[RMDB]
RNA sequence: GGGAACGACUCGAGUAGAGUCGAAAAACGGUGCGGAAGUUCGCGCUUCCGUGAAACACGAAAAUCGGACGGUGGCUGCAAGUCGCAUCGCAAAACCGCGGCAAGUGGAGUUAGCGAGAGGAGGCUGAAACCAUCCAACACUUCGGUGUUGGAUGAAGUCAUUAAUAUGAUUCGUCAUAUUAAUGACAAAAGAAACAACAACAACAAC
Reactivity to 2A3 in 0.01 (KOAc 150mM, MgCl2 10mM, bicine 150mM(pH8.5), 24C), signal-to-noise 8, nucleotides 027 to 156: a000c030g020g000u050g000c000g010g020a030a010g030u090u140c060g020c020g000c060u010u000c000c000g000u020g030a070a080a000c130a000c070g090a050a030a020a110u110c030g020g010a010c030g010g050u030g040g000c060u080g010c060a050a040g020u040c020g000c020a020u030c020g010c040a050a080a010a010c030c030g010c010g050g000c060a100a080g020u060g060g030a050g020u060u090a030g030c030g030a030g010a020g070g020a010g020g000c020u040g030a070a010a000c010c000a010u000c000c000a000a000c000a000c000u040u070c220g080g000u000g000u000u000g000g000a000u000g010a000a010
Reactivity to DMS in 0.01 (KOAc 150mM, MgCl2 10mM, bicine 150mM(pH8.5), 24C), signal-to-noise 4, nucleotides 027 to 156: a050c020g020g020u000g020c010g000g010a020a070g010u000u000c250g030c270g010c010u000u000c010c020g010u000g000a100a080a070c080a080c050g010a060a060a110a110u000c060g000g010a070c030g020g010u000g010g000c030u000g010c030a060a130g020u000c010g010c010a160u000c030g000c030a080a070a080a110c060c070g030c050g010g010c070a070a110g020u010g010g010a140g010u000u000a100g000c030g000a080g010a110g030g000a080g000g020c030u000g000a110a080a130c090c010a030u000c000c010a010a010c000a000c000u000u000c260g040g010u000g010u000u000g000g000a000u010g000a010a080
Overview: Structure probing data (2A3 and DMS) for a 207-nucleotide construct. Source: RMDB library M2RFPK, as collected in RNAgym.